[RMDB]
RNA sequence: GGGAACGACUCGAGUAGAGUCGAAAAAGCACCCCUCUCGCAACUACGAAUUGUACUACCAGUACUAGUGUCCCUUAUACCAGUACUCCUGUUACCAGUUCGAACUAUACUAUUAGCUCCAGUACUCCUGUCACUAGCACUCCUGUCACAACUACGAGGCUGAAAAUGGAUUCGUCCAUUUUCAGCCAAAAGAAACAACAACAACAAC
Reactivity to 2A3 in 0.01 (KOAc 150mM, MgCl2 10mM, bicine 150mM(pH8.5), 24C), signal-to-noise 1, nucleotides 027 to 156: a000g180c130a160c010c010c010c010u010c020u000c050g050c000a030a000c020u160a060c030g120a090a050u110u040g070u100a060c080u010a070c020c020a000g010u000a000c020u010a060g010u000g060u090c040c000c010u050u100a220u130a080c010c000a000g020u010a020c010u070c010c060u080g020u100u050a110c000c000a020g020u010u060c010g070a040a030c000u030a010u100a080c040u060a140u210u030a010g000c000u010c000c000a000g040u000a030c020u010c050c000u080g000u000c030a010c070u000a080g000c000a000c010u000c000c000u060g030u080c020a060c010a080a100c000u060a040c200g050a020